[RMDB]
RNA sequence: GGGAACGACUCGAGUAGAGUCGAAAAGAUAUGGAGCCGACAUCGAGGUGGAAUGCAACCGUUUGACGCAGCUCGGAAACGAGCUGCCGAGGUUGCAUUCCACUACCCACCGAUGGGCUCCUAAGUCCAAUAACUCCAAGUUCGCUUGGAGUUAUUGAAAAGAAACAACAACAACAAC
Reactivity to DMS in 0.01 (KOAc 150mM, MgCl2 10mM, bicine 150mM(pH8.5), 24C), signal-to-noise 6, nucleotides 027 to 126: g000a110u000a300u000g010g000a030g020c010c000g010a250c020a000u000c000g000a110g030g020u000g010g000a030a010u000g000c000a010a010c010c000g010u000u020u020g010a170c300g010c000a010g010c000u000c010g010g000a090a100a270c000g000a010g020c000u000g010c000c000g000a030g010g020u000u000g000c010a000u010u000c000c000a000c000u000a010c050c030c120a300c100c000g000a010u000g010g010g000c000u000c000c000u000a000a090g000u010c060

Conditions: 150 mM KOAc, 10 mM MgCl2 and 150 mM bicine (pH 8.5), 24 C. This 177-nucleotide RNA was probed chemically with DMS. It was measured as part of the RMDB library TTRINS. Values cover nucleotides 27 to 126.